[RMDB]
Chemical mapping of a 177-nucleotide RNA with DMS and 2A3. Source: RMDB library OK2TST, as collected in RNAgym. The DMS profile rests on 1,382 reads. Reactivities are given for positions 27 through 126.

RNA sequence: GGGAACGACUCGAGUAGAGUCGAAAAUAUUCGAAAAUUGUGAGAGCAUCUCAGCAUUGCAUGGAUCAGAUUGCAUUUUCGAAGCAUAUUCAAAUCCAAUCGUACCAUCGUUGUGAGACCCGUGGAAGUGCUCAGUAUCAUUCGUGAUACUGAGCACAAAAGAAACAACAACAACAAC
Reactivity to DMS in 0.01 (KOAc 150mM, MgCl2 10mM, bicine 150mM(pH8.5), 24C), signal-to-noise 2, nucleotides 027 to 126: u000a140u000u010c030g000a030a020a030a040u000u010g060u000g000a080g000a190g010c220a040u000c030u000c040a090g010c020a150u010u020g010c100a080u010g000g000a060u020c030a150g010a080u000u000g010c140a010u000u000u000u010c040g040a030a060g010c190a030u030a060u010u000c060a050a120a120u000c130c010a040a040u000c060g020u000a200c110c050a050u000c020g000u000u000g020u000g010a030g030a050c010c010c000g010u000g010g010a070a100
Reactivity to 2A3 in 0.01 (KOAc 150mM, MgCl2 10mM, bicine 150mM(pH8.5), 24C), signal-to-noise 2, nucleotides 027 to 126: u030a010u020u030c010g000a010a050a010a070u230u070g010u010g040a040g000a020g020c060a080u000c130u070c070a010g020c050a170u050u300g020c030a090u060g010g000a000u030c040a060g080a170u020u000g030c030a020u000u000u000u070c020g000a020a000g080c050a060u040a050u140u040c000a020a000a060u000c010c010a020a020u060c040g020u030a080c000c030a080u090c070g080u050u050g020u050g010a000g040a030c010c010c000g100u100g140g000a190a130